Overview
An RNA of 177 nucleotides, treated with 2A3 and DMS and read out base by base. For DMS, 1,405 sequencing reads were counted. DMS adducts were read by reverse transcription with MarathonRT. 2A3 adducts were read by reverse transcription with SuperScript II with manganese. It was measured as part of the RMDB library 15KREP.

RNA sequence: GGGAACGACUCGAGUAGAGUCGAAAAAAUGUGCUUUAGACACUUCUUCUGGGUUUUAGCUUAUUUUAGUAAGAAACAUGUAGAAGUUUUUACUGAUGGUAAGCUUAAUUGUAGUUUCCAGGACGCUCAAAUCUCUAUAGUUCGCUAUAGAGAUUUGAAAAGAAACAACAACAACAAC
Reactivity to 2A3 in 0.01 (KOAc 150mM, MgCl2 10mM, bicine 150mM(pH8.5), 24C), signal-to-noise 2, nucleotides 027 to 126: a000a000u070g000u010g020c050u080u140u040a050g070a180c020a010c000u050u020c020u040u030c010u030g050g050g000u020u040u020u130a000g000c000u000u000a000u080u080u030u030a000g000u010a000a030g060a170a050a010c020a020u200g060u150a150g050a300a030g040u040u000u020u050u030a010c000u000g030a040u020g020g010u000a010a000g000c000u020u050a030a030u040u120g150u100a080g010u000u050u000c010c010a010g030g020a020c030g000c030u010
Reactivity to DMS in 0.01 (KOAc 150mM, MgCl2 10mM, bicine 150mM(pH8.5), 24C), signal-to-noise 2, nucleotides 027 to 126: a020a020u000g010u000g010c060u010u000u010a130g020a230c010a030c010u000u000c100u020u000c020u010g000g000g010u000u010u010u010a020g000c010u000u010a010u000u000u000u000a010g000u000a010a030g010a020a020a020c020a060u020g020u000a190g010a110a130g040u000u000u000u010u010a000c000u000g000a030u020g000g020u000a020a000g000c010u000u010a030a040u010u010g010u010a100g020u000u000u000c010c010a080g000g000a110c260g010c150u000
High 2A3 reactivity points to a flexible backbone, as in loops and unpaired stretches.